[RMDB]
RNA sequence: GGGAACGACUCGAGUAGAGUCGAAAAGAUAUGGACUCACUACCCACCAUGCUAAACCUAUGAAGUUCAUUCGGAAACGAAUGAAUGGAGGUUUAGACAUGAGGUGAGUCCUAAGUCAAAAGACUAUCAAAGGUUCUUCGGAACCUUUGAUAGUCAAGACUAAACUACUGUUCGCAGUAGUUUAGUCAAAAGAAACAACAACAACAAC
Reactivity to DMS in 0.01 (KOAc 150mM, MgCl2 10mM, bicine 150mM(pH8.5), 24C), signal-to-noise 3, nucleotides 027 to 156: g000a080u000a170u000g010g010a020c010u000c000a020c020u000a060c010c050c030a300c110c000a030u010g000c010u000a000a010a010c000c020u010a300u010g000a120a240g000u000u000c000a000u000u000c010g010g030a130a070a190c000g010a020a010u000g000a010a000u000g010g000a000g030g050u010u000u000a020g000a090c020a020u000g000a140g030g000u000g000a050g030u000c000c000u010a000a040g020u000c030a090a100a110a170g010a030c010u000a000u000c000a000a020a020g010g000u000u000c010u000u010c300g040g000a000a010c000c010u000u000u000g000a000u000a000g010u000c020a000a060
Reactivity to 2A3 in 0.01 (KOAc 150mM, MgCl2 10mM, bicine 150mM(pH8.5), 24C), signal-to-noise 4, nucleotides 027 to 156: g040a010u100a040u130g000g000a000c000u000c000a010c000u100a120c050c070c020a040c020c010a010u000g000c010u010a000a000a020c000c000u200a300u300g010a020a000g000u000u010c000a000u000u000c000g000g020a010a020a030c010g000a000a000u010g000a000a000u000g010g000a010g000g000u000u000u010a000g050a030c000a000u000g010a010g010g000u000g000a000g000u000c000c000u000a010a000g020u030c020a040a010a040a130g030a000c000u050a010u050c000a000a000a010g000g000u000u000c000u040u110c220g080g000a010a000c000c020u000u000u000g000a000u000a000g000u000c000a000a000

The record gives the reactivity of an RNA of 207 nucleotides to DMS and 2A3. For DMS, 4,885 sequencing reads were counted. The 2A3 profile rests on 8,380 reads. The RNA was probed in 150 mM KOAc, 10 mM MgCl2 and 150 mM bicine (pH 8.5) at 24 C. It was measured as part of the RMDB library RNAMAK. Values are in units of 0.01, from 0 to 300, in steps of 10. Reactivities are given for positions 27 through 156.